Chemical mapping of a 177-nucleotide RNA with DMS and 2A3.
RNA sequence: GGGAACGACUCGAGUAGAGUCGAAAAAGUUAUGAGUUCGCUCAUAACUACAGCGAAAGGCGCUCGGACCCGCAGUCCCCCGAAGGCAUCCCAGCCUGUCCAAGUUGGUAUAUUUCGAUAUACCAAAGAUACGUACUAUCUUCGGAUAGUACGUAUCAAAAGAAACAACAACAACAAC
Reactivity to DMS in 0.01 (KOAc 150mM, MgCl2 10mM, bicine 150mM(pH8.5), 24C), signal-to-noise 3, nucleotides 027 to 126: a030g000u000u000a000u000g000a020g020u000u010c220g020c000u000c000a000u000a000a010c000u000a070c120a080g010c050g010a060a100a130g010g010c050g020c040u000c060g000g000a110c010c050c020g020c090a100g000u000c010c010c010c040c040g010a070a030g000g010c010a050u000c020c020c010a190g010c010c000u000g000u000c070c110a080a100g000u010u000g000g010u000a000u000a000u000u000u010c160g000a020u000a010u000a000c000c000a010a020a060
Reactivity to 2A3 in 0.01 (KOAc 150mM, MgCl2 10mM, bicine 150mM(pH8.5), 24C), signal-to-noise 2, nucleotides 027 to 126: a000g000u020u000a000u000g010a020g040u040u130c180g060c100u010c000a000u010a010a010c010u010a030c050a020g050c020g100a220a090a040g050g000c020g000c030u020c040g090g040a070c020c030c000g030c040a040g100u070c020c000c000c010c010g040a020a020g000g000c000a040u040c010c010c000a010g010c010c010u020g010u020c020c010a070a030g050u020u030g040g010u010a010u000a000u020u080u050c080g030a000u010a000u000a000c010c000a000a000a000

As a SHAPE reagent, 2A3 marks flexible, mostly unpaired nucleotides at the ribose 2'-OH. Values cover nucleotides 27 to 126. The data come from the RNA Mapping Database (RMDB), library M2PK50.